[RMDB]
RNA sequence: GGGAACGACUCGAGUAGAGUCGAAAAACCUGGCGGUGAUUUCGGUCAACGGUCUGUUUGCCGCUCGCGAAGCGCGUCAGGCGCUGCAAAACGAUCUCAACGUGAUGCUGUUUUCCGAUAACGUCUCCCGCUCUGUAGAUUUCGAUCUACAGAGCGGAAAAGAAACAACAACAACAAC
Reactivity to DMS in 0.01 (KOAc 150mM, MgCl2 10mM, bicine 150mM(pH8.5), 24C), signal-to-noise 1, nucleotides 027 to 126: a060c010c000u020g020g000c020g010g020u020g020a090u010u000u000c010g040g030u000c080a040a060c030g000g020u000c070u020g010u000u000u020g030c070c030g030c010u010c220g010c110g020a080a070g030c020g010c010g000u000c140a020g000g010c000g020c070u000g010c070a040a030a150a060c010g020a120u000c070u010c180a080a190c030g010u000g010a260u010g000c010u010g000u000u000u010u000c000c010g000a030u020a050a090c090g000u010c030u020c120
Reactivity to 2A3 in 0.01 (KOAc 150mM, MgCl2 10mM, bicine 150mM(pH8.5), 24C), signal-to-noise 2, nucleotides 027 to 126: a000c040c000u050g000g020c040g080g300u150g100a280u070u070u040c010g000g000u030c040a030a010c020g030g050u020c070u080g180u060u100u180g080c100c030g020c060u030c080g180c030g090a060a010g020c030g010c010g050u050c050a010g090g000c040g020c060u060g000c000a010a060a020a040c000g010a100u030c040u040c090a090a110c020g040u040g030a040u090g020c020u030g030u020u040u050u000c020c030g030a050u090a080a020c030g030u010c020u070c040